[RMDB]
RNA sequence: GGGAACGACUCGAGUAGAGUCGAAAAAUAGGGAACGUGAGCUGGGUUUAGACCGUCGUGAGACAGGUUAGUUUUACCCUACUGAUGGCGUGUCAUUGUAAUAGUAAUUGAACUUAGUACGAGAGGAAAAUGAGCGUGUAUUCGUACACGCUCAUUUAAAAGAAACAACAACAACAAC
Reactivity to DMS in 0.01 (KOAc 150mM, MgCl2 10mM, bicine 150mM(pH8.5), 24C), signal-to-noise 4, nucleotides 027 to 126: a060u040a070g010g000g010a060a060c090g010u020g010a060g010c030u010g000g010g010u000u010u000a090g000a030c000c000g000u000c000g010u000g000a080g000a050c160a070g000g010u000u010a080g010u030u010u010u000a060c060c020c010u000a170c030u010g010a020u010g000g000c010g000u020g000u000c030a110u010u000g020u020a060a070u020a070g010u010a060a100u010u010g000a060a060c040u010u000a050g010u000a060c070g010a100g010a090g000g000a080
Reactivity to 2A3 in 0.01 (KOAc 150mM, MgCl2 10mM, bicine 150mM(pH8.5), 24C), signal-to-noise 4, nucleotides 027 to 126: a000u130a020g050g010g000a070a030c040g050u020g040a050g020c040u020g010g000g090u020u020u070a040g010a000c000c000g000u010c010g000u030g030a060g020a110c100a080g020g010u040u020a010g020u050u020u100u230a080c000c000c010u030a020c040u080g120a040u060g030g010c010g000u100g030u030c020a030u020u110g060u140a110a220u060a130g130u030a080a100u060u040g040a030a010c000u040u020a030g030u080a030c040g010a020g000a070g090g150a010